The data come from the RNA Mapping Database (RMDB), library TTRDES. An RNA of 177 nucleotides, treated with DMS and 2A3 and read out base by base. The reactions ran in a buffer of 150 mM KOAc, 10 mM MgCl2 and 150 mM bicine (pH 8.5), at 24 C.

[RMDB]
RNA sequence: GGGAACGACUCGAGUAGAGUCGAAAAGAUAUGGACAUGCAGCCGAUAAGCAUAAGUAUCGGAAACGAUACAAUGCUUUUGACGGCUUCCCAUGUCCUAAGUCAAAAGGAUCUGUUCGCAGAUCCAAGGGAUGGUAUAAGUUCGCUUAUACCAUCCCAAAAGAAACAACAACAACAAC
Reactivity to DMS in 0.01 (KOAc 150mM, MgCl2 10mM, bicine 150mM(pH8.5), 24C), signal-to-noise 3, nucleotides 027 to 126: g000a030u000a300u000g000g010a010c000a000u000g070c170a040g030c000c000g000a180u000a010a000g000c000a000u000a110a110g010u000a000u000c000g000g000a100a040a190c000g010a000u000a000c000a210a060u010g000c000u000u010u000u010g050a290c110g000g020c010u010u020c200c230c010a020u000g000u000c000c000u010a010a100g000u000c050a060a080a140a080g010g010a010u000c000u000g020u000u020c250g020c010a010g000a010u000c000c000a080a060
Reactivity to 2A3 in 0.01 (KOAc 150mM, MgCl2 10mM, bicine 150mM(pH8.5), 24C), signal-to-noise 2, nucleotides 027 to 126: g030a020u080a030u130g000g010a020c010a000u030g150c230a000g000c000c030g010a070u030a080a000g000c020a010u110a250a170g010u010a010u000c010g020g000a080a060a020c010g000a000u000a010c010a020a050u000g000c000u100u050u030u090g240a120c000g000g000c000u060u020c000c000c010a000u010g000u000c000c000u020a110a010g110u090c050a070a080a000a130g000g010a010u010c010u010g050u100u100c300g000c150a000g000a010u030c020c000a010a040